[RMDB]
RNA sequence: GGGAACGACUCGAGUAGAGUCGAAAAGCGUACUACUCUUCGUCACCAGAGGCAACAGCUACCCACUGCCUAUCCCAAAUAGGAUAGGCAAGAAGGUAGACAUGCCUCUGCAAGUCGAAGAGUAUCGCAAACAUUAAGAUCUUCGGAUCUUAAUGAACGAUAAGCCUCUCUUCGGAGAGGCUUAUCGAAAAGAAACAACAACAACAAC
Reactivity to 2A3 in 0.01 (KOAc 150mM, MgCl2 10mM, bicine 150mM(pH8.5), 24C), signal-to-noise 1, nucleotides 027 to 156: g060c040g080u160a090c030u000a000c000u050c000u000u000c020g000u050c010a090c110c000a000g020a050g000g010c010a000a000c010a250g050c000u010a000c000c000c090a090c070u000g000c000c000u010a010u090c010c000c050a170a270a190u300a070g000g000a000u000a000g000g000c010a000a000g010a020a020g000g020u000a020g030a010c030a010u030g000c000c000u000c000u000g020c000a090a220g010u010c000g000a000a010g000a000g010u000a000u030c000g000c000a070a010a000c000a000u000u020a000a000g000a000u000c000u070u080c190g100g000a000u090c000u010u010a020a030u000g010a060a040
The record gives the reactivity of an RNA of 207 nucleotides to 2A3. Values cover nucleotides 27 to 156. 2A3 adducts were read by reverse transcription with SuperScript II with manganese. The 2A3 profile rests on 850 reads. It was measured as part of the RMDB library RNAMAK. Conditions: 150 mM KOAc, 10 mM MgCl2 and 150 mM bicine (pH 8.5), 24 C.